[RMDB]
Chemical mapping of a 207-nucleotide RNA with 2A3 and DMS.

RNA sequence: GGGAACGACUCGAGUAGAGUCGAAAAACGAUGAUUUUUGUUUAGAGUUUUGAAACAAAAAUGCACGACUUUCUUGAGAAGAGAGAACUCGUCUCUUUCUCUUUGAAUGGGGGCUUUCUUUCGAGAAAGAAAGACUUUGAGACGACUCACCAAAGAGCAUGUAUAGCAGAUUCGUCUGCUAUACAUGAAAAGAAACAACAACAACAAC
Reactivity to 2A3 in 0.01 (KOAc 150mM, MgCl2 10mM, bicine 150mM(pH8.5), 24C), signal-to-noise 3, nucleotides 027 to 156: a000c030g060a140u100g000a020u040u020u010u000u020g070u010u020u050a150g060a140g140u220u300u220u300g080a030a010a010c020a010a000a000a000a000u180g090c050a020c030g130a070c050u090u060u040c010u040u050g030a050g020a090a030g010a020g000a010g020a100a050c030u020c060g140u000c030u000c000u050u090u010c030u000c000u050u100u150g080a090a070u100g000g000g000g040g010c000u020u000u000c010u000u060u110c160g030a090g080a060a040a000g040a000a010a010g040a030c040u110u170u200g050a040g000a010c020g010a010c000u010c050a040c010c040a100a080a000g050a040g040
Reactivity to DMS in 0.01 (KOAc 150mM, MgCl2 10mM, bicine 150mM(pH8.5), 24C), signal-to-noise 1, nucleotides 027 to 156: a060c000g020a140u010g030a030u000u000u010u010u000g000u000u000u000a100g010a280g030u000u000u000u000g000a070a030a030c040a000a050a000a030a000u000g020c050a100c010g000a140c040u020u000u000c000u000u000g000a180g010a050a110g010a090g020a050g000a050a090c050u000c100g040u000c010u000c020u000u000u000c000u000c020u000u000u020g000a030a080u010g010g010g040g020g020c010u010u010u000c000u000u000u000c060g000a160g000a080a040a020g000a030a040a050g000a050c050u010u010u000g010a150g010a050c030g000a090c060u000c000a130c000c050a040a060a090g010a300g010